[RMDB]
RNA sequence: GGGAACGACUCGAGUAGAGUCGAAAACGCGAGGUCACGGUCGGCUACCGGGUGACCUAUGAGUGCGAGCGGUGCGCCAACGACGGCACGAUCUACACCUCGGACGGCGUCACGUGGGAGUGCGGCCGCUGGCACCGGGGCGACUACGUGCGGGCGCGCUCACCGGGAUUUUCGAAUCCCGGUGAGCAAAAGAAACAACAACAACAAC
Reactivity to 2A3 in 0.01 (KOAc 150mM, MgCl2 10mM, bicine 150mM(pH8.5), 24C), signal-to-noise 2, nucleotides 027 to 156: c050g040c050g000a030g030g030u050c010a020c060g070g120u100c050g130g010c070u080a130c040c040g050g060g050u040g030a040c000c000u040a100u160g110a060g060u110g010c010g010a020g020c000g000g060u100g040c010g000c000c010a040a030c080g110a010c010g080g050c030a010c050g030a000u040c020u070a090c080a070c110c010u030c030g000g050a060c010g000g060c020g000u040c070a110c230g030u110g040g050g040a140g020u250g040c000g020g010c030c000g000c020u010g030g010c050a010c000c000g000g000g000g040c010g010a030c050u200a050c020g000u000g000c000g020g030g010c010g000c030